Structure probing data (2A3 and DMS) for a 177-nucleotide construct.

RNA sequence: GGGAACGACUCGAGUAGAGUCGAAAAGAAUCUCACUUGGGCGGGUGAUUUAUGGGGAUUUAUUGUGACUCCAGCGCGUAUUAGUGAGAUUAUGAAUACGUUGAAAUGAUUACGCGCAAAGUAACAAGGGAUUAUAAAUGUUCGCAUUUAUAAUCCCAAAAGAAACAACAACAACAAC
Reactivity to 2A3 in 0.01 (KOAc 150mM, MgCl2 10mM, bicine 150mM(pH8.5), 24C), signal-to-noise 2, nucleotides 027 to 126: g010a050a060u020c030u000c000a000c000u030u040g030g080g060c050g020g030g000u140g090a110u040u140u070a030u040g020g000g010g030a020u040u040u070a070u030u170g010u000g030a040c030u050c090c070a040g000c010g000c000g000u020a030u010u020a030g030u000g000a010g020a000u050u050a000u020g040a070a040u150a050c130g010u090u110g080a050a070a000u050g020a040u030u150a000c000g000c000g010c030a000a000a050g040u030a040a050c050a080a070
Reactivity to DMS in 0.01 (KOAc 150mM, MgCl2 10mM, bicine 150mM(pH8.5), 24C), signal-to-noise 3, nucleotides 027 to 126: g000a050a050u000c030u000c010a030c000u010u010g000g000g000c090g000g000g050u010g010a150u000u040u030a090u050g000g000g000g000a130u040u060u030a090u050u010g010u000g000a100c010u010c060c040a170g000c030g010c000g010u000a020u020u000a050g010u000g000a090g010a060u000u010a030u030g010a130a110u020a110c160g000u000u010g030a110a050a060u000g000a020u010u000a000c020g000c000g000c020a120a040a060g000u000a060a080c170a070a110